[RMDB]
RNA sequence: GGGAACGACUCGAGUAGAGUCGAAAAGAUAUGGACGUCCUCUGCGCUCUAGCGAAGAACGAACAAGGCUCCUCGGAAACGAGGAGCCUUGUUCGGGAGCUAGAGACCCGCAUGACGUCCUAAGUCACAACACAAACAAGUUCGCUUGUUUGUGUUGAAAAGAAACAACAACAACAAC
Reactivity to DMS in 0.01 (KOAc 150mM, MgCl2 10mM, bicine 150mM(pH8.5), 24C), signal-to-noise 1, nucleotides 027 to 126: g020a030u000a300u010g000g010a010c010g000u010c000c010u000c020u000g000c010g010c030u000c000u010a010g020c000g020a080a190g020a120a220c010g010a030a040c010a020a050g000g050c010u000c000c030u020c000g030g000a130a070a300c010g040a000g040g010a010g050c000c000u010u000g000u000u000c000g000g020g000a090g020c000u000a000g000a000g000a060c250c300c100g020c010a000u060g000a100c010g010u010c000c010u010a010a040g010u000c010a300